The record gives the reactivity of an RNA of 177 nucleotides to 2A3 and DMS.
DMS adducts were read by reverse transcription with MarathonRT.
The RNA was probed in 150 mM KOAc, 10 mM MgCl2 and 150 mM bicine (pH 8.5) at 24 C.
[RMDB]
RNA sequence: GGGAACGACUCGAGUAGAGUCGAAAAUACUUGUGGCAGAAGGUGGUUUCGUAGACCUCGAUGUAGAUCUCGUGCUCGCUGGCGUUGAAGAGGAUGCGCAGUUUGUUUCCUUCAUCGUCGAUUUUAACUUAGAUAGACCGUUCGCGGUCUAUCUAAGAAAAGAAACAACAACAACAAC
Reactivity to 2A3 in 0.01 (KOAc 150mM, MgCl2 10mM, bicine 150mM(pH8.5), 24C), signal-to-noise 1, nucleotides 027 to 126: u090a010c030u040u080g020u040g110g000c030a050g010a170a030g100g000u010g020g000u030u040u090c040g000u030a020g050a100c010c020u000c040g070a070u070g060u070a040g000a110u000c030u020c030g000u020g000c030u000c030g000c070u050g000g000c030g020u040u030g010a050a050g030a060g030g030a040u050g020c070g030c050a040g020u070u100u110g000u010u010u090c000c000u030u040c020a050u070c010g090u030c030g000a070u000u000u030u150a070a020
Reactivity to DMS in 0.01 (KOAc 150mM, MgCl2 10mM, bicine 150mM(pH8.5), 24C), signal-to-noise 3, nucleotides 027 to 126: u000a080c070u000u000g000u000g010g010c040a080g000a100a080g010g010u010g010g010u000u000u010c100g010u010a100g010a090c070c020u000c040g010a080u010g010u010a030g000a050u010c030u000c040g010u000g000c040u000c040g030c070u000g010g000c020g020u000u000g010a070a040g020a110g000g010a060u000g010c070g000c100a040g000u010u000u000g020u000u010u000c010c010u000u000c050a050u010c060g000u000c060g010a130u000u000u010u000a050a200